This 177-nucleotide RNA was probed chemically with DMS and 2A3. For 2A3 the reverse transcriptase was SuperScript II with manganese. The data come from the RNA Mapping Database (RMDB), libraries RFM100 and RFMREP. The RNA was probed in 150 mM KOAc, 10 mM MgCl2 and 150 mM bicine (pH 8.5) at 24 C.
RNA sequence: GGGAACGACUCGAGUAGAGUCGAAAAACUAGUACUACGGUACUAGAAGUAACAUACCAGUUCUGCUGCUGAAAACAGCUUGAAGAAAUUUUACUUACCAUUCUGAACGUGCCAUACGUGGCACGAAACCUGUUUGUUAGUUCGCUAACAAACAGGUAAAAGAAACAACAACAACAAC
Reactivity to DMS in 0.01 (KOAc 150mM, MgCl2 10mM, bicine 150mM(pH8.5), 24C), signal-to-noise 4, nucleotides 027 to 126: a210c000u000a000g000u010a000c000u000a070c190g030g000u000a010c000u000a010g000a040a030g010u000a020a010c210a050u010a110c130c110a160g030u000u000c020u010g000c000u000g000c020u020g010a120a120a070a300c000a000g010c010u000u010g000a030a030g000a050a070a120u020u000u000u000a010c010u000u000a150c050c020a120u010u030c080u010g000a080a200c010g030u000g010c010c010a060u020a090c190g020u000g000g000c000a010c010g010a020a110
Reactivity to 2A3 in 0.01 (KOAc 150mM, MgCl2 10mM, bicine 150mM(pH8.5), 24C), signal-to-noise 9, nucleotides 027 to 126: a000c000u000a000g000u000a000c000u020a020c190g110g000u000a000c000u000a000g010a020a010g020u020a030a020c030a050u120a090c050c030a050g040u030u000c020u030g000c000u010g000c020u080g100a100a080a040a030c010a000g000c000u070u130g030a020a010g070a010a090a030u090u090u030u040a070c040u030u040a070c020c040a110u110u080c070u100g070a130a040c010g000u000g000c000c000a020u040a080c280g100u050g000g000c000a000c000g010a010a000